[RMDB]
RNA sequence: GGGAACGACUCGAGUAGAGUCGAAAAAGUGGUGCGAUCUUGGCUCACUGCAGACUCCAUCUCCUGGGCUCAAGUGAUCCUCCCACCUCAUCCUCCAGAGUACCUGGGGCUACAGUCGCCCACCACCAGUAUAUCCACUAUUCGUAGUGGAUAUACUAAAAGAAACAACAACAACAAC
Reactivity to DMS in 0.01 (KOAc 150mM, MgCl2 10mM, bicine 150mM(pH8.5), 24C), signal-to-noise 9, nucleotides 027 to 126: a120g020u000g010g020u000g020c060g010a030u010c070u000u000g010g010c040u000c020a050c050u000g010c130a070g010a080c040u010c030c050a080u010c080u000c070c070u000g010g010g000c070u000c070a070a060g010u010g000a050u000c040c020u010c020c010c020a100c080c030u000c050a060u010c050c010u000c020c020a060g010a110g010u010a080c110c040u000g000g010g010g010c060u010a050c190a060g010u000c050g000c010c010c010a060c040c050a080c070c070
Reactivity to 2A3 in 0.01 (KOAc 150mM, MgCl2 10mM, bicine 150mM(pH8.5), 24C), signal-to-noise 9, nucleotides 027 to 126: a000g050u040g010g030u150g020c020g030a060u060c060u040u090g020g010c010u000c020a060c040u030g020c040a020g020a120c030u030c060c010a070u040c050u050c050c050u040g020g020g000c020u030c090a070a050g040u020g070a050u030c010c000u020c000c020c000a030c000c010u030c020a080u050c000c010u010c010c010a020g020a010g060u040a100c010c020u020g000g000g010g010c020u060a050c050a090g020u020c010g020c020c010c000a010c010c010a020c010c000
The record gives the reactivity of an RNA of 177 nucleotides to DMS and 2A3. For 2A3, 33,085 sequencing reads were counted. The data come from the RNA Mapping Database (RMDB), library OK2TST. DMS adducts were read by reverse transcription with MarathonRT. For DMS, 35,121 sequencing reads were counted. The reactions ran in a buffer of 150 mM KOAc, 10 mM MgCl2 and 150 mM bicine (pH 8.5), at 24 C. 2A3 adducts were read by reverse transcription with SuperScript II with manganese.